[RMDB]
This 177-nucleotide RNA was probed chemically with 2A3 and DMS.
The DMS profile rests on 1,556 reads.
The reactions ran in a buffer of 150 mM KOAc, 10 mM MgCl2 and 150 mM bicine (pH 8.5), at 24 C.
For DMS the reverse transcriptase was MarathonRT.
Source: RMDB library OK2TST, as collected in RNAgym.

RNA sequence: GGGAACGACUCGAGUAGAGUCGAAAAAUGUCGCGCUUCUCAAACAGUCGGGCGUCAACCCCAUCGUCGUGCAUGGAGGGGGGCCGCAGAUACAGGCCAUGCUGACCAAGCUCGGCAUCGAAUCGCACCGAUAUAUCGUGUUCGCACGAUAUAUCGGAAAAGAAACAACAACAACAAC
Reactivity to 2A3 in 0.01 (KOAc 150mM, MgCl2 10mM, bicine 150mM(pH8.5), 24C), signal-to-noise 2, nucleotides 027 to 126: a030u050g020u040c010g000c020g060c050u040u000c090u060c000a120a130a130c020a020g050u050c080g030g040g000c010g030u050c050a070a200c000c000c010c000a060u100c050g160u000c020g090u050g060c050a020u060g020g000a080g030g050g010g020g010g020c030c020g000c040a020g010a160u180a100c060a010g050g000c030c020a040u150g000c020u010g010a100c030c020a030a000g000c000u000c000g000g000c020a010u050c040g040a060a060u080c030g000c090a090
Reactivity to DMS in 0.01 (KOAc 150mM, MgCl2 10mM, bicine 150mM(pH8.5), 24C), signal-to-noise 3, nucleotides 027 to 126: a060u000g030u000c030g030c120g000c050u000u000c020u040c120a130a110a130c160a090g000u000c040g000g000g000c010g030u000c100a110a230c040c000c000c010a090u000c050g000u000c100g010u010g010c140a060u000g010g010a260g000g000g010g000g010g000c140c020g000c090a120g020a110u030a140c090a120g000g000c020c030a050u000g020c110u010g000a080c080c100a060a100g010c060u000c020g000g000c010a070u010c060g020a080a050u000c070g000c120a190